[RMDB]
RNA sequence: GGGAACGACUCGAGUAGAGUCGAAAAACAGAAAAAAGGAGUUUAAAUUAGAUUUGCAAACGGACGGUACUAAAUACCGUCACUUUUACGUCUAACUUCUCGUUAACUCUGCAAAAAGAAAACAAGAAAAACAAGCGUGAGUUCGCUCACGCUUGAACAUCAAGAUGUUGUUCGCAACAUCUUGAUGAAAAGAAACAACAACAACAAC
Reactivity to DMS in 0.01 (KOAc 150mM, MgCl2 10mM, bicine 150mM(pH8.5), 24C), signal-to-noise 1, nucleotides 027 to 156: a040c080a050g010a010a050a110a120a090a080g010g000a010g000u000u000u000a020a010a110u000u010a040g000a000u030u000u020g100c010a010a030a020c220g000g060a010c010g040g020u000a040c030u000a110a050a300u000a010c000c000g010u010c000a000c000u030u000u000u000a000c040g000u000c010u020a040a060c000u000u030c020u030c040g000u000u000a030a090c170u000c000u000g000c000a050a000a060a090a130g010a040a060a090a080c030a080a050g010a040a020a060a090a080c000a000a000g000c010g020u010g020a030g020u000u000c300g030c000u000c000a000c020g000c000u010u000g000a000a000
Reactivity to 2A3 in 0.01 (KOAc 150mM, MgCl2 10mM, bicine 150mM(pH8.5), 24C), signal-to-noise 4, nucleotides 027 to 156: a000c020a020g100a030a120a010a010a020a040g050g010a030g010u130u180u170a050a090a080u030u030a030g010a020u070u100u270g060c050a030a020a020c030g000g010a000c000g000g020u020a030c080u240a100a060a110u050a020c000c000g010u000c000a020c000u000u010u020u040a010c040g010u000c000u020a030a030c030u060u030c020u000c030g040u030u020a050a030c050u000c010u090g040c110a060a050a030a050a020g100a040a060a030a010c090a040a060g110a110a070a040a010a010c000a000a000g000c010g000u000g000a000g000u060u110c190g020c060u010c000a000c000g000c000u000u000g000a000a000
This 207-nucleotide RNA was probed chemically with DMS and 2A3.
For 2A3 the reverse transcriptase was SuperScript II with manganese.
For 2A3, 2,815 sequencing reads were counted.